[RMDB]
RNA sequence: GGGAACGACUCGAGUAGAGUCGAAAAGGGGUCCAUGAGUAGUCCUUGGACCUCUUAGGGAGGACUGAAGCCUCCACGGUCCGAGGAUCUAAGAGCUAGGACGAAAGUGGACGGAGGCACCCAAACAGUCUAAAGUGCUUCGGCACUUUAGACUGAAGAUGAGAAAUGGAUUCGUCCAUUUCUCAUCAAAAGAAACAACAACAACAAC
Reactivity to 2A3 in 0.01 (KOAc 150mM, MgCl2 10mM, bicine 150mM(pH8.5), 24C), signal-to-noise 1, nucleotides 027 to 156: g040g000g010g010u010c010c000a000u010g000a000g000u000a000g010u000c030c050u190u300g060g090a100c020c000u010c000u000u000a000g000g000g000a030g000g010a000c010u020g040a090a020g050c010c010u020c020c010a020c050g010g000u000c000c000g020a240g020g010a020u000c000u000a000a000g000a000g020c040u090a030g010g000a000c000g010a000a000a000g030u000g000g000a020c000g000g000a000g000g010c010a040c000c000c000a080a110a030c000a010g000u000c000u010a000a000a000g000u010g000c010u050u130c250g070g000c000a000c000u000u000u000a000g000a000c010u000g000a000a010
Reactivity to DMS in 0.01 (KOAc 150mM, MgCl2 10mM, bicine 150mM(pH8.5), 24C), signal-to-noise 2, nucleotides 027 to 156: g020g020g030g030u010c000c010a050u000g010a110g060u010a200g000u010c020c020u020u000g050g000a050c300c000u010c000u000u000a040g020g000g000a020g040g010a050c020u030g020a030a190g010c010c010u000c010c000a140c030g000g040u000c020c010g000a110g010g000a030u010c000u010a040a090g000a070g030c040u000a050g030g020a040c020g010a140a210a300g010u000g000g010a120c000g020g020a050g020g030c040a110c010c010c000a090a080a170c000a020g000u000c000u010a000a000a020g030u000g020c020u020u010c300g040g030c030a000c000u000u000u010a020g000a010c010u000g020a030a140
This 207-nucleotide RNA was probed chemically with 2A3 and DMS. For 2A3, 5,960 sequencing reads were counted. Source: RMDB library RNAMAK, as collected in RNAgym. For DMS the reverse transcriptase was MarathonRT. The RNA was probed in 150 mM KOAc, 10 mM MgCl2 and 150 mM bicine (pH 8.5) at 24 C.